[RMDB]
RNA sequence: GGGAACGACUCGAGUAGAGUCGAAAAUCUUACAAAAUUGUGACCCUGUGUUAUGUUUUCCAAAAGACAGCAGUUUACAUUUUUGUGUUUAGACUGCUAUUAAAUAUGUUUUCAGCAGAAUAAAAAACUAGUAACUAUCGUUCGCGAUAGUUACUAGAAAAGAAACAACAACAACAAC
Reactivity to DMS in 0.01 (KOAc 150mM, MgCl2 10mM, bicine 150mM(pH8.5), 24C), signal-to-noise 2, nucleotides 027 to 126: u020c020u010u000a070c020a060a030a040a030u000u000g000u000g020a070c070c300c020u000g000u000g020u000u000a060u000g000u000u000u000u000c140c210a050a080a100a060g000a030c020a050g000c100a030g000u010u000u000a030c000a010u000u000u000u000u010g010u000g010u000u020u010a090g000a170c000u000g000c000u000a110u000u000a040a080a160u010a070u000g000u000u000u000u000c130a060g010c040a030g020a040a150u010a010a030a020a070a050a140